This 207-nucleotide RNA was probed chemically with 2A3. The RNA was probed in 150 mM KOAc, 10 mM MgCl2 and 150 mM bicine (pH 8.5) at 24 C. For 2A3, 667 sequencing reads were counted.
[RMDB]
RNA sequence: GGGAACGACUCGAGUAGAGUCGAAAAGGCUGCGUAUCACUCUAGGGUACGUGAUAGUGCGAUAUAAGAAGCACUGGUACAUGCCGGCAGGGACAGUUAAGAGAUGGCCGCAGUCUCGUGUCCUUGCAAAAGGAGUUCUCGUUCGCGAGAACUCCAAGCAAAAGUUUAGCUUCGGCUAAACUUUUGCAAAAGAAACAACAACAACAAC
Reactivity to 2A3 in 0.01 (KOAc 150mM, MgCl2 10mM, bicine 150mM(pH8.5), 24C), signal-to-noise 1, nucleotides 027 to 156: g000g000c000u000g010c060g060u040a020u000c000a030c190u170c200u200a140g010g000g110u010a000c010g000u000g020a050u070a040g030u000g000c020g010a120u030a040u060a300a110g100a090a000g040c010a000c000u010g000g040u140a060c020a050u170g040c020c000g040g000c000a010g020g000g000a000c000a020g000u060u200a180a030g010a010g020a050u080g120g020c090c030g100c090a040g000u000c000u000c000g010u000g020u000c000c000u010u000g000c000a020a010a030a030g000g000a000g000u010u000c000u000c000g030u050u100c200g010c000g060a000g000a000a000c000u000c010c000a010a030